RNA sequence: GGGAACGACUCGAGUAGAGUCGAAAACCUCCAAACAAGCUCAAGGUCCAUUUGUAGGAGAACGUAGGGUAGUCAAGCUUCCAAGACUGCAGACACAUCCAAGUGAGGCACUGCAUGUGGCAGUCUGAUGUAACAUGUUUUUCGAAACAUGUUACAUAAAAGAAACAACAACAACAAC
Reactivity to DMS in 0.01 (KOAc 150mM, MgCl2 10mM, bicine 150mM(pH8.5), 24C), signal-to-noise 9, nucleotides 027 to 126: c040c010u010c090c080a070a100a080c130a070a080g010c040u010c050a080a080g000g010u000c030c030a090u010u020u010g020u010a080g000g000a060g010a060a060c090g010u010a070g010g000g010u010a040g010u010c050a070a090g010c060u000u010c040c050a080a050g010a040c020u000g000c020a070g020a300c040a030c030a040u000c040c050a040a080g010u010g000a080g000g010c070a070c030u000g000c140a040u010g020u000g010g000c020a020g000u000c020u000g010
Reactivity to 2A3 in 0.01 (KOAc 150mM, MgCl2 10mM, bicine 150mM(pH8.5), 24C), signal-to-noise 9, nucleotides 027 to 126: c010c000u050c030c010a100a110a100c040a080a030g020c020u040c050a060a050g060g020u020c030c010a080u070u070u170g080u100a060g000g070a050g020a060a010c030g040u070a070g030g020g020u030a030g030u050c040a060a020g020c020u080u020c030c000a020a020g010a020c010u010g000c020a020g070a100c010a000c000a040u060c050c020a120a050g070u070g110a150g090g020c040a020c060u010g000c020a030u060g010u030g060g000c000a000g010u000c020u030g020

Structure probing data (DMS and 2A3) for a 177-nucleotide construct.
For 2A3 the reverse transcriptase was SuperScript II with manganese.
Conditions: 150 mM KOAc, 10 mM MgCl2 and 150 mM bicine (pH 8.5), 24 C.
It was measured as part of the RMDB libraries RFM100 and RFMREP.